[RMDB]
Structure probing data (DMS and 2A3) for a 177-nucleotide construct. For DMS, 753 sequencing reads were counted. The 2A3 profile rests on 736 reads. Reactivities are rounded to 0.1 and cut off at 0 and 3.
RNA sequence: GGGAACGACUCGAGUAGAGUCGAAAACAGUGGACAAAAACCACUAAUUACAAAGGCUAAAAAAUCAAUCGCAGGCUUCCGUUUGCGUGAAGGAAUGCCAAUUGGUGCAAAAGUUACAUUACGUGGACAUGGUCAGUGAUUUCGAUCACUGACCAUGAAAAGAAACAACAACAACAAC
Reactivity to DMS in 0.01 (KOAc 150mM, MgCl2 10mM, bicine 150mM(pH8.5), 24C), signal-to-noise 1, nucleotides 027 to 126: c080a030g010u010g000g000a070c070a080a040a100a120a100c130c000a010c000u000a030a070u000u030a140c190a130a060a060g030g000c060u010a000a050a040a060a180a080u000c030a060a080u000c090g000c060a010g030g000c030u010u000c100c070g000u010u000u000g000c070g020u010g000a120a070g020g000a070a030u010g000c000c070a050a060u000u020g000g040u000g000c120a010a060a110a030g020u000u000a030c060a040u000u000a080c130g000u000g050g000a300
Reactivity to 2A3 in 0.01 (KOAc 150mM, MgCl2 10mM, bicine 150mM(pH8.5), 24C), signal-to-noise 1, nucleotides 027 to 126: c030a020g030u020g050g030a010c040a070a220a040a020a010c010c000a030c010u040a000a050u090u030a100c080a090a160a000g050g000c020u140a050a000a030a030a040a240u070c050a040a000u070c070g030c130a040g000g020c020u280u100c100c070g070u040u080u130g070c030g020u100g040a060a030g050g020a060a040u040g000c000c050a020a010u000u010g010g000u010g000c020a000a070a030a070g050u040u040a070c050a070u190u130a060c090g000u050g040g070a010